[RMDB]
RNA sequence: GGGAACGACUCGAGUAGAGUCGAAAAAAGUACUUCCCCGUAAGAAGAGGGCUCCUAGGAGCACUUAGAGGGGAGCCUCAAAGGUUCGUAAGAGCUGUUGAUGGAGUGAGCUUUGAAGUUUACAAGCUAAACGUCUCUAGUUCGCUAGAGACGUUUAAAAAGAAACAACAACAACAAC
Reactivity to DMS in 0.01 (KOAc 150mM, MgCl2 10mM, bicine 150mM(pH8.5), 24C), signal-to-noise 3, nucleotides 027 to 126: a060a060g010u010a110c090u000u020c010c000c010c030g000u000a120a100g010a190a180g010a040g010g000g020c000u000c000c030u010a200g020g020a010g010c000a020c010u000u010a080g020a110g000g000g010g020a040g000c070c000u010c050a030a060a110g010g010u000u000c020g010u020a140a160g000a020g010c000u010g010u010u000g020a040u010g010g010a130g000u020g000a080g010c020u000u000u000g000a090a110g010u010u000u010a060c100a070a140g010c160